This 177-nucleotide RNA was probed chemically with DMS and 2A3. The RNA was probed in 150 mM KOAc, 10 mM MgCl2 and 150 mM bicine (pH 8.5) at 24 C. For 2A3, 1,056 sequencing reads were counted.
RNA sequence: GGGAACGACUCGAGUAGAGUCGAAAACUAUGUAUAAUUGGUGUAAUUGUCAUUUCAAAAGAUGUAGAUGCAGUUCUAGGUAUUGCGAAAAGUGGUCCUAUAGUCAAAUAAAUGAUGAUUAAGAACACUGUAUGGGAACAUUCGUGUUCCCAUACAGAAAAGAAACAACAACAACAAC
Reactivity to DMS in 0.01 (KOAc 150mM, MgCl2 10mM, bicine 150mM(pH8.5), 24C), signal-to-noise 2, nucleotides 027 to 126: c020u020a090u000g030u020a070u020a100a120u010u010g000g020u000g010u000a050a030u010u000g000u010c010a030u000u010u000c160a050a080a170a130g000a100u000g000u000a060g010a080u000g010c090a050g000u000u010c070u010a030g000g010u000a050u000u000g020c040g000a080a080a080a080g010u000g000g000u000c060c020u010a050u010a100g010u000c020a010a080a160u000a040a030a040u000g010a020u000g000a050u010u000a040a110g000a080a070c120a040
Reactivity to 2A3 in 0.01 (KOAc 150mM, MgCl2 10mM, bicine 150mM(pH8.5), 24C), signal-to-noise 2, nucleotides 027 to 126: c020u000a070u140g090u100a290u100a170a210u080u170g040g000u110g060u080a000a000u030u000g020u020c010a010u060u040u000c080a100a080a050a050g060a040u100g030u080a030g030a090u080g060c090a010g020u050u020c010u030a030g000g130u110a060u010u090g020c020g080a060a120a090a060g080u040g030g010u020c040c010u020a020u050a090g030u050c020a030a080a000u100a070a080a000u070g020a010u010g020a000u000u070a120a010g120a110a000c050a010